RNA sequence: GGGAACGACUCGAGUAGAGUCGAAAACUACCUUUCCAUGCUAAAAGGUUCAAUGAUUGGUUAGAAAGCAUGUCAAAUAAUGUCGUUCGAUCAAAAGGUAUCGUAUGGUUAGCACAAUACAAUCAUGCCGAAGAGCGAGAUUCGUCUCGCUCUUCGGAAAAGAAACAACAACAACAAC
Reactivity to 2A3 in 0.01 (KOAc 150mM, MgCl2 10mM, bicine 150mM(pH8.5), 24C), signal-to-noise 2, nucleotides 027 to 126: c000u000a020c010c010u020u020u000c090c000a010u020g000c000u040a020a020a010a010g160g000u140u170c110a000a000u030g000a000u010u010g000g150u050u070a110g120a020a050a000g000c000a000u000g000u180c190a110a170a040u270a250a040u050g090u110c000g020u110u250c000g000a010u010c000a010a100a100a060g130g050u120a090u000c000g000u000a040u030g180g000u090u100a140g110c030a020c000a190a080u050a110c000a000a000u000c000a000u080g020
This 177-nucleotide RNA was probed chemically with 2A3.